[RMDB]
RNA sequence: GGGAACGACUCGAGUAGAGUCGAAAACACACUUUCGAGUGUGAAAAAAACCUUUGUGUAGAGCUUGUAUGGGAGCUCCAGGGACCCAUUGGGUCCCGGGAGGAGCGAAGAACAUACUUGCUCUACACUCUGGUAAAAAGGAGUAUUCGUACUCCAAAGCACAAUAUUUCUUCGGAAAUAUUGUGCUAAAAGAAACAACAACAACAAC
Reactivity to 2A3 in 0.01 (KOAc 150mM, MgCl2 10mM, bicine 150mM(pH8.5), 24C), signal-to-noise 1, nucleotides 027 to 156: c010a000c000a010c010u100u130u210c180g050a040g000u050g000u040g120a130a040a000a070a000a010a000c010c000u060u000u040g000u010g000u000a000g000a000g000c000u000u020g010u000a010u000g000g000g020a030g000c000u040c000c010a030g000g010g000a000c000c000c070a140u150u300g000g000g000u060c030c040c020g010g030g020a220g000g000a010g000c000g020a230a040g010a020a000c000a000u000a010c000u000u010g000c000u000c000u010a000c000a000c000u000c000u000g000g000u120a000a020a000a060a070g000g000a020g010u010a010u050u200c130g000u090a080c020u000c000c000a060a020
An RNA of 207 nucleotides, treated with 2A3 and read out base by base. The 2A3 profile rests on 1,073 reads.